[RMDB]
RNA sequence: GGGAACGACUCGAGUAGAGUCGAAAAGCACGCCGGUUUGGCCACGUGCGAACACUUGAGCGGCAGAACCUGAGCUCUUGUGGAUUAGGACGUUCUACGGGGCAAACCGCACGUAGUUCGUCCGAAAGGCAUCCAGGUGGUUCGCCACUUGGAUGCCAAAAGAAACAACAACAACAAC
Reactivity to DMS in 0.01 (KOAc 150mM, MgCl2 10mM, bicine 150mM(pH8.5), 24C), signal-to-noise 6, nucleotides 027 to 126: g010c010a000c000g020c140c080g000g000u010u040u030g010g020c040c090a230c050g010u010g000c020g030a120a150c010a030c010u000u000g020a010g010c000g000g020c050a070g010a080a100c110c050u010g020a300g000c000u000c010u000u000g010u000g000g040a160u020u050a090g020g020a000c000g020u000u000c010u000a020c000g000g020g040g030c000a080a080a140c260c190g000c000a050c000g000u010a000g000u000u000c010g020u000c000c000g000a030a090a060
Reactivity to 2A3 in 0.01 (KOAc 150mM, MgCl2 10mM, bicine 150mM(pH8.5), 24C), signal-to-noise 9, nucleotides 027 to 126: g020c000a020c020g070c110c180g090g080u150u210u230g220g050c010c010a040c020g010u020g000c010g010a090a010c010a010c010u010u020g000a000g010c030g170g000c120a040g060a130a100c020c060u060g050a010g010c000u000c000u000u010g010u000g000g020a020u040u130a040g000g000a000c000g000u000u000c000u000a000c000g010g000g160g000c040a170a200a120c100c100g000c010a010c000g000u010a010g010u000u010c000g000u000c000c000g000a000a000a000
This 177-nucleotide RNA was probed chemically with DMS and 2A3. DMS adducts were read by reverse transcription with MarathonRT.